[RMDB]
RNA sequence: GGGAACGACUCGAGUAGAGUCGAAAAGACAUACACGCUGGGAGCUACCCACCGAGCUUCUUUGGGAGCGAACUGAAGCGCGCACGGUUCGCGAGGAUCAAGAGCUCGAGGCUCCUGUGCUGAAGCGCGCACGGCAACCGAAAGGUGCGAUAUUAAAGAAAUCUAGACUGUUCGCAGUCUAGAUUUCAAAAGAAACAACAACAACAAC
Reactivity to 2A3 in 0.01 (KOAc 150mM, MgCl2 10mM, bicine 150mM(pH8.5), 24C), signal-to-noise 1, nucleotides 027 to 156: g080a000c030a130u300a040c080a080c090g000c030u000g000g000g000a030g000c000u110a220c000c030c000a010c000c010g010a020g000c030u240u240c000u300u300u200g020g000g000a030g000c000g020a030a000c000u030g060a070a030g000c010g000c010g020c000a000c010g020g010u020u030c000g060c020g020a240g000g000a000u000c000a000a000g000a000g000c000u010c000g010a000g000g000c000u000c000c000u000g000u000g030c000u030g030a230a020g000c000g010c010g000c000a000c020g000g000c000a010a010c000c000g050a090a060a060g000g000u040g020c000g080a070u120a150u260u250a070a070a080